[RMDB]
RNA sequence: GGGAACGACUCGAGUAGAGUCGAAAAUUACAGUGACUAAUGGACGCGAGUUUAGCACUGCUUCGAUUUGACAGCAACGAUGCAAAUUCUUCAUAUGUAAAGCUGUUUUCACCAAUAACUCGUUUAAGCUGGCACUCCCAUUCGUGGGAGUGCCAGCAAAAGAAACAACAACAACAAC
Reactivity to 2A3 in 0.01 (KOAc 150mM, MgCl2 10mM, bicine 150mM(pH8.5), 24C), signal-to-noise 2, nucleotides 027 to 126: u210u190a070c000a000g010u000g170a170c000u010a030a030u160g250g030a130c000g080c000g000a000g040u020u020u060a010g000c000a000c000u000g120c000u090u200c040g300a300u000u100u270g000a000c000a040g000c000a130a000c080g050a080u030g190c200a080a170a300u200u030c110u060u060c000a040u230a090u150g010u110a080a190a000g000c000u000g000u040u000u000u000c250a250c090c000a050a000u130a120a000c030u000c030g050u000u080u300a070a000
This 177-nucleotide RNA was probed chemically with 2A3. For 2A3 the reverse transcriptase was SuperScript II with manganese. For 2A3, 309 sequencing reads were counted. The RNA was probed in 150 mM KOAc, 10 mM MgCl2 and 150 mM bicine (pH 8.5) at 24 C. Values cover nucleotides 27 to 126.